[RMDB]
RNA sequence: GGGAACGACUCGAGUAGAGUCGAAAAAGGGUCGAAAACCUAGCGAAUCGCCGUAGUGCAGCGUGUUCGUCCGCGUCGCUGCGGUUAAAUCAAAUGACUGAACUAAACAUGUAGAACUAGUCGUGGAGCGCUUCUGGACGCGGGUUCGAUUCCCGCCGGUAUUGAAGAGGUUCGCCUCUUCAAUACCAAAAGAAACAACAACAACAAC
Reactivity to DMS in 0.01 (KOAc 150mM, MgCl2 10mM, bicine 150mM(pH8.5), 24C), signal-to-noise 2, nucleotides 027 to 156: a050g000g000g000u020c030g030a120a050a090a140c030c010u000a110g030c000g020a100a050u000c000g010c000c030g040u040a070g030u010g020c050a090g020c080g010u000g000u000u000c140g010u000c020c000g000c010g020u020c040g020c040u010g030c010g020g040u010u000a030a060a110u000c090a080a080a100u000g000a080c030u000g010a070a140c050u000a060a060a130c130a070u010g040u000a090g010a080a080c040u000a040g010u000c020g040u000g000g000a070g030c080g050c030u020u010c030u000g010g010a070c050g020c000g000g000g030u010u000c070g010a300u000u000c010c000c000g000c090c090
Reactivity to 2A3 in 0.01 (KOAc 150mM, MgCl2 10mM, bicine 150mM(pH8.5), 24C), signal-to-noise 4, nucleotides 027 to 156: a000g050g000g000u070c050g050a010a020a070a100c040c030u040a040g040c030g050a060a060u050c030g000c020c010g030u030a030g010u030g060c050a010g020c040g010u050g020u040u060c050g050u040c020c010g000c000g050u040c010g000c020u030g010c000g000g000u050u060a030a040a010u120c050a040a050a070u070g020a010c030u050g010a040a020c020u090a140a130a040c060a060u180g070u150a030g020a120a050c040u010a040g040u040c020g030u070g040g010a050g020c060g000c040u050u020c050u080g040g020a030c020g000c000g000g010g000u010u060c020g000a040u040u050c010c000c000g010c020c070
Structure probing data (DMS and 2A3) for a 207-nucleotide construct. For DMS the reverse transcriptase was MarathonRT. The reactions ran in a buffer of 150 mM KOAc, 10 mM MgCl2 and 150 mM bicine (pH 8.5), at 24 C. Reactivities are given for positions 27 through 156.